[RMDB]
RNA sequence: GGGAACGACUCGAGUAGAGUCGAAAAUCUAUCACCAGCCCAUGUUUACGACACGAAUGGGCUGUUGCAAAUUACGUAUAGCUCUUGCAACAUCGUGUCGAUACGUUCCCAAGCUAUACGCCACAAAUUGUCAUCAUACGUUCGCGUAUGAUGACAAAAAAGAAACAACAACAACAAC
Reactivity to DMS in 0.01 (KOAc 150mM, MgCl2 10mM, bicine 150mM(pH8.5), 24C), signal-to-noise 2, nucleotides 027 to 126: u000c060u020a120u000c040a120c040c000a020g000c000c000c000a100u000g030u010u000u010a080c100g010a070c050a020c040g080a090a060u000g000g010g010c080u000g020u020u010g000c140a060a010a130u000u020a090c010g010u000a010u000a000g010c000u000c220u000u000g000c010a060a020c030a040u020c070g010u000g000u000c070g020a090u000a220c100g010u000u010c000c000c000a130a030g000c010u000a000u000a010c000g010c170c160a040c130a000a060a150
Reactivity to 2A3 in 0.01 (KOAc 150mM, MgCl2 10mM, bicine 150mM(pH8.5), 24C), signal-to-noise 2, nucleotides 027 to 126: u000c000u010a060u140c030a010c040c000a020g010c000c030c000a030u060g120u200u300u030a070c040g050a010c000a000c040g110a070a070u080g030g040g000c020u020g000u000u010g010c010a030a060a100u240u100a100c010g030u030a010u020a020g040c030u070c030u220u190g010c050a020a010c000a110u050c030g000u000g000u020c020g000a050u020a110c040g000u000u020c010c000c000a000a000g000c040u000a000u040a040c010g040c010c050a090c030a030a110a040